The record gives the reactivity of an RNA of 177 nucleotides to DMS.

RNA sequence: GGGAACGACUCGAGUAGAGUCGAAAAGAUAUGGAGCUUCGAUAAGCUGGUAUCGGAAACGAUAUCCAGCUUUUGACGAAGACUCCUAAGUCAAACAGGGGUAAUGGGUUCGCCCAUUACCCCUGAACAGUAACUGCGAGUUCGCUCGCAGUUACUGAAAAGAAACAACAACAACAAC
Reactivity to DMS in 0.01 (KOAc 150mM, MgCl2 10mM, bicine 150mM(pH8.5), 24C), signal-to-noise 1, nucleotides 027 to 126: g010a030u020a300u010g000g000a010g010c020u010u000c010g010a230u000a020a020g030c000u010g000g020u000a010u010c000g010g000a100a100a220c010g010a030u000a020u000c030c000a020g000c000u000u000u000u020g010a230c090g010a020a010g000a070c000u000c000c000u010a050a090g010u010c040a110a110a270c020a010g000g000g000g010u010a020a010u020g000g000g010u000u020c220g000c010c000c000a030u000u000a010c000c000c000c000u000g010a010a010

For DMS the reverse transcriptase was MarathonRT. For DMS, 898 sequencing reads were counted.